[RMDB]
Structure probing data (DMS and 2A3) for a 177-nucleotide construct. Source: RMDB library OK2TRN, as collected in RNAgym. For 2A3 the reverse transcriptase was SuperScript II with manganese. The 2A3 profile rests on 1,940 reads. The DMS profile rests on 4,115 reads. The reactions ran in a buffer of 150 mM KOAc, 10 mM MgCl2 and 150 mM bicine (pH 8.5), at 24 C.
RNA sequence: GGGAACGACUCGAGUAGAGUCGAAAACGAUCCAGACCGCAAUUAACAAUGGUACAGGUGAGUUAUGUUGGCCACGCUCAGAUCACAUUUGUCCUGUGUCAUGUGGGUUUAGUGAGGCAGGGAAGGACCUAUGUGGACGAUUCGUCGUCCACAUAGGAAAAGAAACAACAACAACAAC
Reactivity to DMS in 0.01 (KOAc 150mM, MgCl2 10mM, bicine 150mM(pH8.5), 24C), signal-to-noise 4, nucleotides 027 to 126: c130g020a190u000c010c020a090g000a190c040c050g030c130a070a060u010u000a080a140c120a070a080u000g030g000u000a040c060a050g000g010u000g000a120g010u000u010a050u000g000u010u010g020g000c030c040a040c160g020c090u000c070a060g000a090u000c050a030c090a100u000u010u010g000u000c000c020u000g000u000g010u000c030a010u000g010u000g000g000g010u010u000u000a080g010u010g010a100g000g010c060a070g010g020g010a070a100g010g000a190
Reactivity to 2A3 in 0.01 (KOAc 150mM, MgCl2 10mM, bicine 150mM(pH8.5), 24C), signal-to-noise 2, nucleotides 027 to 126: c020g020a030u060c010c000a000g070a080c030c020g010c090a060a070u130u080a170a060c050a100a010u090g000g030u060a040c010a030g000g030u080g030a070g050u080u040a120u210g180u150u110g030g000c020c040a030c050g000c010u040c040a080g000a130u080c010a000c000a100u030u080u170g070u000c000c000u080g020u000g020u050c030a010u050g050u070g080g040g020u040u100u030a060g000u050g080a060g050g020c050a030g010g010g010a030a030g050g080a010